[RMDB]
RNA sequence: GGGAACGACUCGAGUAGAGUCGAAAAUGCUGCAUUUGUCUCAGAUGUUUUCGCUGCGGCUGCCGAUGCGGCUGCCGCCUUUUCCGACGCUGCCGCCGCAGUGGCUGACGCACCUGCAUCACCGGCACCAUUAAACUAAGUUCGCUUAGUUUAAUGGAAAAGAAACAACAACAACAAC
Reactivity to DMS in 0.01 (KOAc 150mM, MgCl2 10mM, bicine 150mM(pH8.5), 24C), signal-to-noise 8, nucleotides 027 to 126: u000g010c030u010g000c060a090u000u010u010g010u000c040u000c050a170g000a040u000g000u000u010u010u010c100g010c170u000g010c010g000g010c010u000g010c010c020g010a080u000g010c020g010g000c000u000g010c010c030g000c010c030u000u000u000u010c190c090g010a040c120g010c080u000g010c000c080g000c020c040g010c020a020g000u010g010g010c020u000g010a040c050g010c010a040c060c030u010g010c020a020u000c020a120c130c040g010g010c060a150
Reactivity to 2A3 in 0.01 (KOAc 150mM, MgCl2 10mM, bicine 150mM(pH8.5), 24C), signal-to-noise 7, nucleotides 027 to 126: u050g000c010u020g010c020a100u040u060u110g050u010c030u020c070a040g020a070u030g060u040u110u090u200c080g000c080u020g000c000g020g020c020u020g000c010c000g040a060u060g020c020g010g000c010u010g000c010c010g010c000c000u150u130u100u040c050c040g030a040c040g010c030u020g000c000c010g000c000c000g000c000a010g020u030g060g000c000u010g010a010c020g000c000a010c000c010u020g000c000a010u020c010a020c030c030g040g000c020a040